[RMDB]
RNA sequence: GGGAACGACUCGAGUAGAGUCGAAAAGAUAUGGAUAUAUCGAGCUCCCGGUCGGAAACGACCGAUGAGCCCAGACAGUAUGAUCCUAAGUCAAAGGGAAAUCGUUCGUUCGCGAACGAUUUCCCAAGUUAAUCAUAAGCUUCGGCUUAUGAUUAACAAAAGAAACAACAACAACAAC
Reactivity to DMS in 0.01 (KOAc 150mM, MgCl2 10mM, bicine 150mM(pH8.5), 24C), signal-to-noise 4, nucleotides 027 to 126: g000a040u000a160u010g000g020a030u000a050u000a060u000c050g020a030g020c010u000c000c230c000g000g000u000c000g030g000a070a050a150c000g000a020c000c000g000a020u000g000a010g030c000c300c070a070g020a040c300a090g010u000a010u010g010a030u000c010c000u010a030a140g010u000c030a070a120a130g000g000g000a010a010a030u000c010g000u000u000c010g010u000u000c240g020c010g000a000a000c000g000a000u000u000u000c000c000c000a000a010
Reactivity to 2A3 in 0.01 (KOAc 150mM, MgCl2 10mM, bicine 150mM(pH8.5), 24C), signal-to-noise 1, nucleotides 027 to 126: g010a020u040a030u050g000g000a000u010a000u010a010u190c040g000a070g000c000u010c000c020c010g000g010u000c000g020g010a060a020a050c000g000a000c010c000g000a020u060g010a000g000c000c030c040a040g030a030c000a030g110u100a050u130g300a070u080c010c020u000a050a010g020u000c030a070a100a130g000g000g000a000a000a000u000c000g020u020u000c020g040u040u080c300g000c050g240a000a010c000g000a000u010u000u000c020c000c010a000a000
The record gives the reactivity of an RNA of 177 nucleotides to DMS and 2A3. The DMS profile rests on 3,362 reads. The 2A3 profile rests on 2,905 reads. The reactions ran in a buffer of 150 mM KOAc, 10 mM MgCl2 and 150 mM bicine (pH 8.5), at 24 C.